This 177-nucleotide RNA was probed chemically with 2A3 and DMS. DMS adducts were read by reverse transcription with MarathonRT. Values are in units of 0.01, from 0 to 300, in steps of 10. The data come from the RNA Mapping Database (RMDB), library OK2TRN. The 2A3 profile rests on 10,520 reads.
RNA sequence: GGGAACGACUCGAGUAGAGUCGAAAACCAGACACUUGCAACUAUGUCUAGUGGUAUCACUAAACAGUCUGUCAAGCCUGGCCAUUUUAAUCAACAUUUCUACAAGCAUCUGCUUGAUAGUGAUAUAAAUGAUGAAUGUUUUCGAACAUUCAUCAUUAAAAGAAACAACAACAACAAC
Reactivity to 2A3 in 0.01 (KOAc 150mM, MgCl2 10mM, bicine 150mM(pH8.5), 24C), signal-to-noise 9, nucleotides 027 to 126: c000c000a000g030a010c090a010c020u010u020g000c000a030a040c040u120a060u220g010u010c010u010a020g010u000g070g150u300a180u300c010a000c020u010a010a020a000c010a010g020u040c080u100g130u190c020a020a000g010c040c000u020g020g010c010c010a090u160u160u090u210a110a120u120c050a020a100c010a110u060u120u030c000u010a020c000a010a010g000c010a120u130c090u300g030c030u030u020g040a130u060a010g030u020g060a010u030a010u050a150
Reactivity to DMS in 0.01 (KOAc 150mM, MgCl2 10mM, bicine 150mM(pH8.5), 24C), signal-to-noise 7, nucleotides 027 to 126: c010c010a030g000a100c130a100c040u000u000g010c030a060a040c070u010a110u010g010u000c030u000a010g030u000g000g010u010a100u010c000a010c000u000a010a030a030c010a030g000u000c210u000g000u000c010a020a030g030c160c020u000g010g000c040c040a150u010u010u000u000a080a130u010c140a060a100c120a060u000u000u000c010u000a030c010a030a010g010c010a180u000c230u010g010c010u000u000g010a090u000a010g010u000g000a040u000a100u010a060